[RMDB]
RNA sequence: GGGAACGACUCGAGUAGAGUCGAAAAAUACCAAAAUCCUGUCUCAGCUAAGGAGCUUCAAGCAGAUUGGCCCGACAUGUCAUUUGAUGAAAGGAGACAUGUUGCGAUGAACUUGUAGUCCAGAUAACCCUCAGGCUAAAUUCGUUUAGCCUGAGGGAAAAGAAACAACAACAACAAC
Reactivity to DMS in 0.01 (KOAc 150mM, MgCl2 10mM, bicine 150mM(pH8.5), 24C), signal-to-noise 2, nucleotides 027 to 126: a110u010a140c050c010a060a030a120a060u000c020c020u010g010u000c000u000c070a040g020c020u000a110a050g000g010a060g010c030u020u000c060a050a140g030c150a080g020a130u010u000g000g020c090c220c080g000a040c000a000u000g050u000c000a110u010u000u000g000a190u030g020a020a110a070g000g000a090g010a010c000a000u000g030u000u000g000c050g000a090u000g000a130a040c020u020u000g040u000a000g000u000c020c030a070g000a140u080a100a160
Reactivity to 2A3 in 0.01 (KOAc 150mM, MgCl2 10mM, bicine 150mM(pH8.5), 24C), signal-to-noise 3, nucleotides 027 to 126: a000u050a030c020c010a020a020a040a070u100c020c010u030g000u100c000u020c040a050g000c040u140a100a100g090g010a050g030c010u070u050c020a080a060g000c050a000g020a290u040u050g080g010c040c020c000g000a010c000a000u000g000u000c040a200u030u030u120g220a230u130g090a040a030a040g120g050a100g000a040c010a000u030g000u000u030g060c060g060a080u060g000a030a030c000u030u060g020u040a030g040u000c010c000a070g060a200u120a160a130

An RNA of 177 nucleotides, treated with DMS and 2A3 and read out base by base. 2A3 adducts were read by reverse transcription with SuperScript II with manganese. Conditions: 150 mM KOAc, 10 mM MgCl2 and 150 mM bicine (pH 8.5), 24 C. It was measured as part of the RMDB library OK1LIB.